[RMDB]
RNA sequence: GGGAACGACUCGAGUAGAGUCGAAAAUAUCAAGCUGAUCCGUUCUACCUGUCCCUUUAGGAUCAGCGAGGGACAGGAUGACCUCUCCGAGAGGAGUAAAAUGGUCUGUGCGACGACGUAUGACCGGACCUCUUAGUCGUCGCUUAGGUCCGGGAGAAUAUGAUUAUUAUUUCGAUAAUAAUCAUAUAAAAGAAACAACAACAACAAC
Reactivity to 2A3 in 0.01 (KOAc 150mM, MgCl2 10mM, bicine 150mM(pH8.5), 24C), signal-to-noise 3, nucleotides 027 to 156: u170a020u040c030a040a040g030c030u050g060a080u050c020c020g040u070u030c030u090a070c010c010u010g020u010c000c010c000u020u040u070a170g050g030a130u130c070a020g040c010g010a000g000g000g000a000c010a010g010g010a020u070g030a000c000c000u020c010u000c020c010g060a060g000a010g070g070a000g030u100a010a050a040a070u160g010g000u000c010u020g020u010g010c020g000a010c000g000a010c020g110u090a050u110g040a030c030c000g030g040a060c010c010u050c060u030u060a030g010u040c020g050u030c080g000c000u010u050a020g000g000u000c010c030g020g010g010a050g020a050
Reactivity to DMS in 0.01 (KOAc 150mM, MgCl2 10mM, bicine 150mM(pH8.5), 24C), signal-to-noise 3, nucleotides 027 to 156: u000a070u000c040a090a190g020c040u000g010a040u000c010c020g000u010u000c090u010a220c060c020u000g010u000c010c000c010u000u000u000a130g020g010a080u000c080a090g040c170g020a040g030g020g020a050c020a060g010g010a110u010g010a090c010c020u010c000u000c010c010g020a280g000a220g030g020a150g000u000a030a080a100a120u000g020g020u010c020u010g030u010g030c040g040a070c020g020a050c030g000u000a060u010g000a130c010c000g000g010a070c050c080u000c050u000u000a100g020u010c010g010u000c030g000c040u000u000a010g030g010u000c010c000g010g020g010a140g000a110